[RMDB]
RNA sequence: GGGAACGACUCGAGUAGAGUCGAAAAUCUGAUGCUGAUGGCCGUCUCACCUGUAAGACCACCAUGGGUAAUAAGACCUUUUUAACAGCCUUUACUGAUGGUGCCCAGCUGGAGGCCAAUGGGCCAGACACUACUCGGGUUUCGACCCGAGUAGUGUAAAAGAAACAACAACAACAAC
Reactivity to DMS in 0.01 (KOAc 150mM, MgCl2 10mM, bicine 150mM(pH8.5), 24C), signal-to-noise 2, nucleotides 027 to 126: u010c010u000g000a120u010g040c010u000g010a150u000g000g000c010c040g000u020c000u010c050a030c190c060u000g000u000a110a070g010a100c200c040a000c010c000a010u010g010g010g010u000a030a060u010a060a050g000a020c030c020u000u000u000u000u010a070a150c300a070g010c060c030u000u000u030a010c010u010g010a020u000g020g000u020g000c140c050c010a110g010c090u000g000g000a140g020g000c010c020a020a070u010g010g000g000c010c030a050g010
Reactivity to 2A3 in 0.01 (KOAc 150mM, MgCl2 10mM, bicine 150mM(pH8.5), 24C), signal-to-noise 1, nucleotides 027 to 126: u000c030u060g050a080u160g030c010u000g000a020u040g040g000c000c000g120u060c050u070c050a070c060c010u030g060u100a120a000g040a130c050c030a020c000c000a020u040g050g060g000u030a010a030u060a120a060g070a080c010c010u090u080u010u020u210a160a040c070a040g000c000c000u020u010u050a040c000u080g150a020u040g000g000u000g000c000c020c030a010g020c040u050g000g040a040g040g000c000c000a040a060u140g020g000g000c000c000a000g010